[RMDB]
RNA sequence: GGGAACGACUCGAGUAGAGUCGAAAAACGCGAGGAUUCGUCCUCGCGUACAUAAGUGAGUUCGCCGGAUAGCUGCCUAAGUGAGUUCGCCGGAUAGCUCCCAAGCACAUAGUUUCGACUAUGUGAAUAGAUUUCUACUUUUCGAAGUAGAAAUCUAAAAAGAAACAACAACAACAAC
Reactivity to 2A3 in 0.01 (KOAc 150mM, MgCl2 10mM, bicine 150mM(pH8.5), 24C), signal-to-noise 6, nucleotides 027 to 126: a000c000g000c010g000a000g010g000a020u030u050c180g050u020c070c000u000c010g000c000g010u020a000c000a060u220a050a090g060u030g090a020g000u000u030c020g000c000c000g000g010a030u040a030g010c030u200g180c030c070u210a280a070g050u080g220a020g010u020u040c040g000c010c000g000g000a030u020a010g000c000u000c010c030c010a040a020g060c010a010c000a000u010a010g010u040u080u100c160g050a010c000u000a000u010g010u000g000a010a020
Reactivity to DMS in 0.01 (KOAc 150mM, MgCl2 10mM, bicine 150mM(pH8.5), 24C), signal-to-noise 8, nucleotides 027 to 126: a010c000g010c000g010a010g000g010a030u000u010c220g010u000c000c000u000c000g020c000g010u000a010c120a050u000a100a100g000u010g000a090g010u010u010c050g020c110c010g000g000a040u000a210g010c020u000g010c100c120u020a090a090g020u000g000a080g010u000u000c060g020c120c010g000g000a040u000a170g000c030u000c000c010c040a120a120g010c010a010c000a010u000a000g010u000u000u020c180g010a030c000u000a000u000g010u000g000a080a110